[RMDB]
RNA sequence: GGGAACGACUCGAGUAGAGUCGAAAAGCUUGGAUCACUUCUGGCCUCAUAGAAUCUAGAACACCCACCGUCCAGAUUACUAGACUGGUCACCAGAUUAUGGUUCGACCCUCUCCUGUUCAACAGGACCGUUCACAAGCCUUCGGGCUUGUGAACGGAAAAGAAACAACAACAACAAC
Reactivity to 2A3 in 0.01 (KOAc 150mM, MgCl2 10mM, bicine 150mM(pH8.5), 24C), signal-to-noise 2, nucleotides 027 to 126: g000c010u040u040g060g000a100u060c000a030c010u020u070c030u080g010g010c040c000u010c000a020u020a060g020a000a040u010c000u020a020g050a180a030c020a100c000c000c010a000c000c070g010u000c000c000a000g030a100u050u060a190c050u030a030g090a290c050u000g000g110u140c070a070c110c020a000g010a170u110u070a150u140g090g050u000u050c050g010a030c000c000c020u060c000u000c000c000u010g030u090u300c090a120a090c000a020g000g000a000
Chemical mapping of a 177-nucleotide RNA with 2A3.
Conditions: 150 mM KOAc, 10 mM MgCl2 and 150 mM bicine (pH 8.5), 24 C.
2A3 adducts were read by reverse transcription with SuperScript II with manganese.
It was measured as part of the RMDB library OK1LIB.
Values cover nucleotides 27 to 126.
For 2A3, 659 sequencing reads were counted.